[RMDB]
RNA sequence: GGGAACGACUCGAGUAGAGUCGAAAAGAUAUGGAAGCAACAGCGAUACGCGUGCGAAGAACUCGGAAACGAGGGAGCACCCCCAUCGACAUGCUUCCUAAGUCAAAGUCGUGCUUCGGCACGACAACAUAAUAGAUUGCUUCGGCAAUCUAUUAUGAAAAGAAACAACAACAACAAC
Reactivity to 2A3 in 0.01 (KOAc 150mM, MgCl2 10mM, bicine 150mM(pH8.5), 24C), signal-to-noise 6, nucleotides 027 to 126: g020a020u090a030u150g000g010a010a000g000c010a000a130c070a200g100c020g000a000u040a090c120g080c050g050u010g010c040g230a210a030g030a070a040c000u000c010g020g000a040a050a060c020g000a010g020g000g000a010g010c000a010c000c020c000c030c070a020u030c000g110a160c030a070u050g000c000u000u010c000c000u010a100a000g010u010c040a150a020a020g010u020c000g000u010g010c000u070u060c220g100g000c000a000c000g010a000c000a000a000
Reactivity to DMS in 0.01 (KOAc 150mM, MgCl2 10mM, bicine 150mM(pH8.5), 24C), signal-to-noise 9, nucleotides 027 to 126: g010a050u000a300u000g010g010a020a010g010c010a040a110c250a200g010c020g000a010u000a070c230g000c300g020u000g020c000g010a070a150g010a100a180c010u000c000g010g000a110a100a150c010g010a020g000g010g000a070g010c000a030c000c030c090c250c090a020u000c010g000a050c090a190u000g000c000u000u000c000c000u000a030a060g010u000c030a090a090a090g020u000c000g010u000g010c000u000u020c190g010g010c000a010c000g000a000c000a040a140

Chemical mapping of a 177-nucleotide RNA with 2A3 and DMS. Values cover nucleotides 27 to 126. The RNA was probed in 150 mM KOAc, 10 mM MgCl2 and 150 mM bicine (pH 8.5) at 24 C. The data come from the RNA Mapping Database (RMDB), library TTRDEL.